[RMDB]
Chemical mapping of a 177-nucleotide RNA with 2A3 and DMS. 2A3 is a SHAPE reagent: it acylates the 2'-hydroxyl of flexible nucleotides of all four kinds. Reactivities are given for positions 27 through 126.

RNA sequence: GGGAACGACUCGAGUAGAGUCGAAAAUGUCCUUGGCACAUACCAUCCAUCACGGUGGUUCUUGUCAUGUAGGGAUUGAAUCCAUAGGAUCUCCACUUUGAACUGCACAGUAGGCAGCCUCCUUGGGAACGGCUAAAGAAUUCGUUCUUUAGCCGUUAAAAGAAACAACAACAACAAC
Reactivity to 2A3 in 0.01 (KOAc 150mM, MgCl2 10mM, bicine 150mM(pH8.5), 24C), signal-to-noise 9, nucleotides 027 to 126: u200g040u020c010c000u010u020g020g000c010a050c000a050u120a030c010c010a020u070c030c010a120u120c060a040c190g000g010u010g010g000u010u010c070u030u050g010u000c010a040u120g100u150a100g020g010g020a030u050u120g080a110a050u020c020c010a080u110a060g040g030a050u020c010u000c020c010a050c030u100u080u110g090a130a060c030u090g030c040a040c010a150g110u140a100g030g050c020a020g010c000c010u030c010c000u030u060g040g000g030
Reactivity to DMS in 0.01 (KOAc 150mM, MgCl2 10mM, bicine 150mM(pH8.5), 24C), signal-to-noise 9, nucleotides 027 to 126: u020g010u010c010c000u010u010g000g010c030a040c200a130u030a050c010c010a030u000c010c180a140u030c250a130c270g000g020u000g000g010u000u010c120u000u000g010u010c020a050u010g020u020a070g010g010g010a050u000u010g000a080a190u020c030c030a080u030a070g010g010a070u010c020u000c010c020a070c070u010u010u010g000a090a130c060u000g000c030a080c100a080g010u010a070g000g010c040a050g000c050c030u000c030c020u010u000g010g000g020